[RMDB]
RNA sequence: GGGAACGACUCGAGUAGAGUCGAAAAAUGCCUCGGGCAUCCAAGCAGCAAGCGCGUUACGCCGUGGGUCGAUGUUUGAUGUUAUGGAGCAGCAACGAUGUUACGCAGCAGGGCAGUCGCCCUAAAAAGCUAAUAGUCUAUUCGUAGACUAUUAGCUAAAAGAAACAACAACAACAAC
Reactivity to DMS in 0.01 (KOAc 150mM, MgCl2 10mM, bicine 150mM(pH8.5), 24C), signal-to-noise 9, nucleotides 027 to 126: a080u000g000c020c010u000c110g010g010g020c030a080u000c040c040a080a100g000c050a060g010c050a070a080g020c050g010c070g010u000u000a090c090g020c030c050g010u000g010g000g020u000c050g010a070u000g010u000u000u000g010a070u000g010u000u000a080u000g010g010a070g010c040a070g010c040a050a080c060g010a070u000g010u000u010a080c090g010c070a090g010c110a070g000g000g010c180a100g010u000c130g010c010c000c010u000a010a040a070a090
Reactivity to 2A3 in 0.01 (KOAc 150mM, MgCl2 10mM, bicine 150mM(pH8.5), 24C), signal-to-noise 8, nucleotides 027 to 126: a000u040g020c010c010u040c050g030g050g010c010a030u030c020c030a040a010g020c020a010g000c010a100a040g030c020g010c020g100u090u090a060c080g020c040c030g080u100g030g030g030u070c050g040a060u060g060u040u060u100g080a060u040g040u100u080a180u160g050g030a040g020c030a010g000c010a050a060c040g020a020u070g020u080u030a050c070g010c030a050g010c020a010g020g020g000c010a020g100u140c080g030c010c000c000u030a080a100a030a010